[RMDB]
RNA sequence: GGGAACGACUCGAGUAGAGUCGAAAAGUGCGUUGGUUCGCCAACGCACAAAAAAGAUAUGGAUUGCUAGAUGCCAGCUCCGCUCGGAAACGAGCGAAGAGCGGUAAUUUCUAUCUGCAAUCCUAAGUCAAAAAACUCAAGGGUUCGCCCUUGAGAAUCGUAGUUUAUAGUUCGCUAUAAACUACGAAAAAGAAACAACAACAACAAC
Reactivity to DMS in 0.01 (KOAc 150mM, MgCl2 10mM, bicine 150mM(pH8.5), 24C), signal-to-noise 1, nucleotides 027 to 156: g070u000g000c000g030u010u010g000g010u000u010c300g040c040c000a000a010c000g060c000a000c000a000a000a060a090a070a090g000a100u010a290u020g000g020a020u000u000g000c010u000a020g020a050u010g000c010c080a170g020c010u010c020c010g040c000u000c010g020g020a130a070a100c020g020a000g000c010g010a020a010g030a050g010c070g040g030u000a020a100u000u020u010c080u000a100u000c060u000g020c000a020a010u000c000c000u000a020a050g000u020c040a020a030a100a100a110a130c010u000c000a010a020g020g020g020u000u020c160g020c040c000c000u000u010g000a040g010a060a090
Reactivity to 2A3 in 0.01 (KOAc 150mM, MgCl2 10mM, bicine 150mM(pH8.5), 24C), signal-to-noise 3, nucleotides 027 to 156: g050u010g000c010g020u010u000g010g030u030u110c190g030c060c000a010a000c000g020c000a000c000a000a010a000a000a000a000g030a020u030a020u070g000g000a000u010u010g020c060u080a020g000a010u030g130c080c140a030g000c060u000c000c000g000c010u010c000g020g040a060a030a010c010g000a000g000c010g050a180a020g000a000g000c010g000g010u010a060a020u040u240u040c040u050a050u010c010u030g000c000a000a000u000c000c010u010a010a000g000u000c030a020a010a070a130a100a170c030u020c000a000a000g060g000g010u070u110c210g140c010c000c000u000u010g000a000g000a010a020